Source: RMDB library M2RFPK, as collected in RNAgym.
Structure probing data (2A3 and DMS) for a 207-nucleotide construct.
The 2A3 profile rests on 5,863 reads.
Conditions: 150 mM KOAc, 10 mM MgCl2 and 150 mM bicine (pH 8.5), 24 C.

RNA sequence: GGGAACGACUCGAGUAGAGUCGAAAACGAGUGCAAUAAAGACGCGGUUGCCGAUCGGUAUGGAUGCCACCGUGACGGCUCAAUCAUACAAGUGCCAACGAUAACGAGGCGCUCGCUAUUGCUGCGUAAAAGCGACGAUCGUUCGCGAUCGUCGCAACAUUAGCAAGAGGUUCGCCUCUUGCUAAUGAAAAGAAACAACAACAACAAC
Reactivity to 2A3 in 0.01 (KOAc 150mM, MgCl2 10mM, bicine 150mM(pH8.5), 24C), signal-to-noise 7, nucleotides 027 to 156: c030g010a040g070u080g030c030a060a100u080a180a170a020g110a040c030g000c020g020g020u020u090g000c030c030g050a050u040c040g030g050u130a110u180g110g030a060u140g030c020c020a010c010c020g030u040g090a070c040g020g000c000u030c070a030a080u100c030a020u070a140c050a090a020g010u010g050c010c010a070a030c110g080a140u100a210a050c060g040a080g050g000c010g000c010u000c020g010c020u030a050u110u160g020c050u050g010c020g040u060a040a040a070a080g000c000g000a000c000g000a000u000c000g000u050u080c160g010c010g090a000u000c000g000u000c000g000c000a000a000
Reactivity to DMS in 0.01 (KOAc 150mM, MgCl2 10mM, bicine 150mM(pH8.5), 24C), signal-to-noise 3, nucleotides 027 to 156: c020g010a080g030u010g010c030a090a120u000a090a120a120g030a120c030g020c000g000g000u000u020g010c000c010g000a180u000c010g030g030u000a080u020g030g000a150u000g010c070c040a070c010c050g020u030g000a160c150g020g000c020u000c050a090a130u000c030a110u000a070c070a090a100g020u010g020c030c020a070a120c060g000a150u010a080a100c030g000a230g000g000c020g050c010u010c010g000c010u000a080u000u000g010c000u000g050c000g020u000a050a050a080a130g020c000g010a030c010g020a010u000c000g040u010u000c250g020c020g010a010u000c000g030u010c000g050c000a000a020